An RNA of 177 nucleotides, treated with DMS and 2A3 and read out base by base. The data come from the RNA Mapping Database (RMDB), library RFMREP. Conditions: 150 mM KOAc, 10 mM MgCl2 and 150 mM bicine (pH 8.5), 24 C.
RNA sequence: GGGAACGACUCGAGUAGAGUCGAAAAAGAGGUUAAAUUGACUCUAGUAGGGAGUCCGUUUCCCACGCGACUCCCUAAUCGAGUCAGGUUGAUUUCUUUAAAACAACCGGUUCUUCGGAACCGGUUGCUUUUAACAAAUGUUCGCAUUUGUUAAAAGAAAAGAAACAACAACAACAAC
Reactivity to DMS in 0.01 (KOAc 150mM, MgCl2 10mM, bicine 150mM(pH8.5), 24C), signal-to-noise 2, nucleotides 027 to 126: a040g000a070g010g010u000u000a020a050a110u000u000g000a020c000u000c000u000a080g010u000a020g010g010g020a030g010u000c010c000g010u000u010u000c020c030c050a300c020g010c180g000a010c000u000c000c010c000u010a010a000u000c210g000a010g000u000c000a020g010g000u000u000g000a070u010u000u000c010u010u000u000a050a070a140a300c000a010a000c000c000g020g010u000u000c010u000u000c190g020g000a010a000c010c000g000g000u010u000g000
Reactivity to 2A3 in 0.01 (KOAc 150mM, MgCl2 10mM, bicine 150mM(pH8.5), 24C), signal-to-noise 1, nucleotides 027 to 126: a000g070a080g050g030u100u060a010a070a120u130u030g000a000c000u000c010u020a040g080u030a000g090g000g000a000g010u000c010c000g010u010u070u060c010c010c000a010c010g020c050g000a010c000u000c060c000c000u000a010a020u020c000g000a000g000u000c020a010g020g030u000u000g050a250u000u040u000c000u060u040u060a100a150a040a060c000a010a000c020c010g000g020u000u000c020u000u040c160g060g000a010a000c000c000g000g010u020u010g000
Values cover nucleotides 27 to 126.